Description:
Structure probing data (DMS and 2A3) for a 177-nucleotide construct. The reactions ran in a buffer of 150 mM KOAc, 10 mM MgCl2 and 150 mM bicine (pH 8.5), at 24 C.
[RMDB]
RNA sequence: GGGAACGACUCGAGUAGAGUCGAAAAUGCGCGAGACUCUAUGCCCGUGACAGAGUGGUAUCAGAGCAGACUUGCUUUACAUCAAUGCCCAGCAGUUCACUCGAUGAUGCACAACUCCAGGGCCAGCCGUAUUUUCAUCGUUCGCGAUGAAAAUACGAAAAGAAACAACAACAACAAC
Reactivity to DMS in 0.01 (KOAc 150mM, MgCl2 10mM, bicine 150mM(pH8.5), 24C), signal-to-noise 1, nucleotides 027 to 126: u000g000c060g020c000g020a120g000a130c040u040c020u010a130u010g010c040c010c010g010u000g020a160c250a130g000a060g030u000g010g010u010a000u020c050a140g000a040g000c070a100g010a040c040u000u000g010c050u000u020u030a040c090a100u000c110a050a090u000g040c000c040c080a070g010c020a040g000u010u010c060a080c010u000c030g010a120u020g000a050u000g010c020a030c080a110a040c040u020c000c080a140g020g000g000c000c130a020g000c130
Reactivity to 2A3 in 0.01 (KOAc 150mM, MgCl2 10mM, bicine 150mM(pH8.5), 24C), signal-to-noise 2, nucleotides 027 to 126: u100g020c060g020c000g080a020g000a070c010u000c040u040a030u080g040c010c030c020g090u060g040a110c100a120g070a010g030u070g060g020u040a040u050c060a000g000a000g050c060a010g020a030c000u050u080g030c000u090u090u100a080c060a120u200c080a090a160u130g030c020c010c020a000g000c000a000g050u130u110c000a000c090u000c030g090a140u100g060a000u040g000c000a030c010a140a120c020u110c010c030a050g000g040g040c010c020a020g030c000

For DMS, 787 sequencing reads were counted.
It was measured as part of the RMDB library VIROID.